[RMDB]
RNA sequence: GGGAACGACUCGAGUAGAGUCGAAAAGCCACUGACUACGGUCAGUGGCAAUAAAUCACGCAAAACCGCCAAAAGAGAAAAUCUCAUGCGUGAAAAGGCGGAACAGGCUAGGUACGCCUAGCCUGAAGAGUUUUACUGAGUUCGCUCAGUAAAACUCAAAAGAAACAACAACAACAAC
Reactivity to 2A3 in 0.01 (KOAc 150mM, MgCl2 10mM, bicine 150mM(pH8.5), 24C), signal-to-noise 3, nucleotides 027 to 126: g010c000c000a000c000u010g000a010c000u000a020c170g070g020u020c000a000g000u010g000g000c000a010a000u000a000a000a000u180c010a000c000g040c050a110a060a200a300c010c000g000c010c000a060a060a170a000g080a050g030a030a230a120a150u070c010u010c020a030u060g000c030g000u000g040a100a070a010a010g030g000c000g010g000a000a010c000a000g000g010c000u010a000g000g010u040a010c220g090c000c000u000a000g000c000c000u010g000a000a000
Reactivity to DMS in 0.01 (KOAc 150mM, MgCl2 10mM, bicine 150mM(pH8.5), 24C), signal-to-noise 2, nucleotides 027 to 126: g000c010c000a000c000u000g010a040c000u000a140c040g000g030u000c000a020g020u000g000g080c000a030a010u040a030a220a150u020c040a010c000g000c000a130a060a100a120c020c000g020c000c000a150a030a070a160g000a060g010a120a120a180a070u010c020u030c000a140u000g010c000g040u010g010a050a020a080a070g000g020c000g010g030a230a270c000a010g000g000c000u000a000g000g000u000a040c270g000c030c000u000a000g000c000c000u000g010a030a040